[RMDB]
RNA sequence: GGGAACGACUCGAGUAGAGUCGAAAACUAGAUGUAGACAAAUGGGGCAGACGGGUUAGAGACCAAAGUAAAACCGGAUGGCUCUUGGGAUCUUGGAAUCUCUCGGGCAAGGGUCUGUCCCGAGGAGAGCCUAACGGUACUUCGGUACCGUUAGGCUAAAAGAAACAACAACAACAAC
Reactivity to DMS in 0.01 (KOAc 150mM, MgCl2 10mM, bicine 150mM(pH8.5), 24C), signal-to-noise 1, nucleotides 027 to 126: c000u000a140g000a140u000g020u000a060g000a110c240a070a090a110u030g000g000g000g040c000a020g000a000c010g000g000g030u000u010a150g040a170g000a110c050c050a050a050a120g060u030a010a000a000a080c010c030g000g010a110u100g000g020c000u000c000u000u000g010g010g000a000u000c000u000u000g030g010a000a010u000c000u000c020u000c050g000g000g080c030a140a070g000g040g000u030c000u010g000u000c020c000c000g060a080g010g000a190g000
Reactivity to 2A3 in 0.01 (KOAc 150mM, MgCl2 10mM, bicine 150mM(pH8.5), 24C), signal-to-noise 1, nucleotides 027 to 126: c050u050a010g020a060u260g060u160a020g000a020c060a090a160a160u300g000g000g000g230c000a000g000a050c060g000g150g000u160u260a150g000a070g000a100c030c020a200a120a000g230u260a300a000a000a000c000c000g000g180a060u030g100g000c050u000c000u000u000g070g000g000a030u000c000u000u060g300g020a210a000u000c000u000c000u000c000g000g000g000c000a000a000g000g000g000u070c000u130g000u040c000c000c060g000a000g000g100a180g080
Notes
Structure probing data (DMS and 2A3) for a 177-nucleotide construct. DMS adducts were read by reverse transcription with MarathonRT. For DMS, 1,301 sequencing reads were counted. The 2A3 profile rests on 451 reads. The reactions ran in a buffer of 150 mM KOAc, 10 mM MgCl2 and 150 mM bicine (pH 8.5), at 24 C. For 2A3 the reverse transcriptase was SuperScript II with manganese.